[RMDB]
RNA sequence: GGGAACGACUCGAGUAGAGUCGAAAAGAUAUGGAUCAAGAACUACAAAUCUGCGAGCAUCGAUCUUUGGUCGGAAACGACCAAAGGGAGCUCGCCUCAGAUUUGCUUGAUCCUAAGUCAAAAUCACUUGAACACCGUUCGCGGUGUUCAAGUGAAACUGUAUACGUUAGUUCGCUAACGUAUACAGAAAAGAAACAACAACAACAAC
Reactivity to 2A3 in 0.01 (KOAc 150mM, MgCl2 10mM, bicine 150mM(pH8.5), 24C), signal-to-noise 6, nucleotides 027 to 156: g010a020u050a020u090g000g000a000u000c000a000a000g020a060a080c100u170a090c300a000a000a010u000c000u020g010c010g000a010g000c030a100u300c040g040a040u020c000u000u000u000g010g000u000c010g020g020a050a050a060c000g010a000c010c030a010a010a000g000g000g010a020g010c020u000c010g010c020c010u070c040a010g000a010u000u000u000g000c000u000u000g000a000u000c000c000u000a040a000g020u000c010a010a020a000a250u030c010a000c010u000u000g000a000a000c000a010c020c000g040u090u100c290g010c010g130g000u000g000u000u000c000a000a000g000u000g000a000a000a000
Reactivity to DMS in 0.01 (KOAc 150mM, MgCl2 10mM, bicine 150mM(pH8.5), 24C), signal-to-noise 2, nucleotides 027 to 156: g020a110u010a220u000g010g020a020u000c000a050a100g020a130a190c060u000a300c010a010a020a010u000c000u000g040c000g000a020g000c000a210u000c120g020a100u000c000u000u000u010g010g030u000c000g020g000a100a080a300c000g020a050c000c000a000a030a010g000g000g020a080g000c010u000c010g020c040c050u000c110a030g010a040u000u000u000g010c010u000u000g020a010u010c000c000u010a020a060g000u010c050a080a050a150a090u010c000a030c000u000u000g000a010a020c000a010c000c000g020u000u000c300g050c060g060g000u000g000u000u000c010a000a010g030u000g000a000a000a030
Structure probing data (2A3 and DMS) for a 207-nucleotide construct. For DMS the reverse transcriptase was MarathonRT. Values cover nucleotides 27 to 156. Values are in units of 0.01, from 0 to 300, in steps of 10. For DMS, 4,029 sequencing reads were counted. Conditions: 150 mM KOAc, 10 mM MgCl2 and 150 mM bicine (pH 8.5), 24 C. For 2A3 the reverse transcriptase was SuperScript II with manganese. High 2A3 reactivity points to a flexible backbone, as in loops and unpaired stretches.